[RMDB]
RNA sequence: GGGAACGACUCGAGUAGAGUCGAAAAUAUGCCCAACAGGUGGCCAAAGGGGUUCCAGUUGGGAGACACCAGGCGCACCUCUCCUGCCACCGGGUCGAACAAGCCGCCAAACACCACUGCCUUGAGCGAGAUAACAGAACUUCGGUUCUGUUAUCUCAAAAGAAACAACAACAACAAC
Reactivity to 2A3 in 0.01 (KOAc 150mM, MgCl2 10mM, bicine 150mM(pH8.5), 24C), signal-to-noise 5, nucleotides 027 to 126: u160a080u120g040c010c000c010a000a010c010a010g030g030u070g030g010c010c010a090a180a130g120g060g000g030u040u040c010c000a060g040u130u120g120g020g000a030g050a010c060a030c020c020a030g050g000c030g010c040a030c000c000u000c000u030c020c030u030g030c010c010a040c020c030g000g000g020u070c030g030a050a030c050a110a010g050c020c000g010c020c000a020a060a020c030a010c010c010a040c020u050g030c000c010u060u090g020a030g060c040
Reactivity to DMS in 0.01 (KOAc 150mM, MgCl2 10mM, bicine 150mM(pH8.5), 24C), signal-to-noise 3, nucleotides 027 to 126: u040a090u020g000c010c000c020a080a070c160a040g040g030u030g010g010c010c080a110a160a140g010g000g000g010u000u000c020c020a160g040u010u020g000g010g020a060g010a070c070a070c020c030a050g000g020c050g020c030a040c030c010u000c070u000c070c070u010g000c020c040a030c020c040g020g000g000u010c050g000a070a100c060a070a120g000c030c050g030c000c020a050a070a100c070a080c030c030a070c030u010g000c030c020u000u020g000a060g040c190
An RNA of 177 nucleotides, treated with 2A3 and DMS and read out base by base. High 2A3 reactivity points to a flexible backbone, as in loops and unpaired stretches. Reactivities are rounded to 0.1 and cut off at 0 and 3. The 2A3 profile rests on 4,541 reads. In probing experiments dimethyl sulfate is read out at A N1 and C N3, which are open when not base-paired.